[RMDB]
RNA sequence: GGGAACGACUCGAGUAGAGUCGAAAAAUCAUCUGAAGAUCAGCUAUUAGAAGAGAAAGAUCAGUUAAGUCCUUUGGCCCUGAUCAGCUUGAUACAAGAACUACUGAUUUCAACUUCUUUGGCUUAAAAAAGGCCACAGAGUUCGCUCUGUGGCCAACUCAACUCCUAUGUUCGCAUAGGAGUUGAGAAAAGAAACAACAACAACAAC
Reactivity to 2A3 in 0.01 (KOAc 150mM, MgCl2 10mM, bicine 150mM(pH8.5), 24C), signal-to-noise 2, nucleotides 027 to 156: a000u070c000a010u070c050u140g100a090a030g020a120u170c050a010g030c000u050a070u270u040a200g010a030a000g030a000g020a130a060a000g030a010u000c000a000g000u020u110a100a020g020u050c000c000u030u080u140g050g000c030c030c070u070g030a090u100c040a030g040c000u070u140g040a040u100a220c080a040a040g050a010a020c010u070a000c000u060g010a020u000u020u070c040a070a080c000u000u000c000u000u040u040g020g000c000u000u020a040a040a050a000a000a000g000g000c010c010a000c000a040g020a010g020u110u130c120g100c110u000c020u000g000u030g000g000c000c000a000a010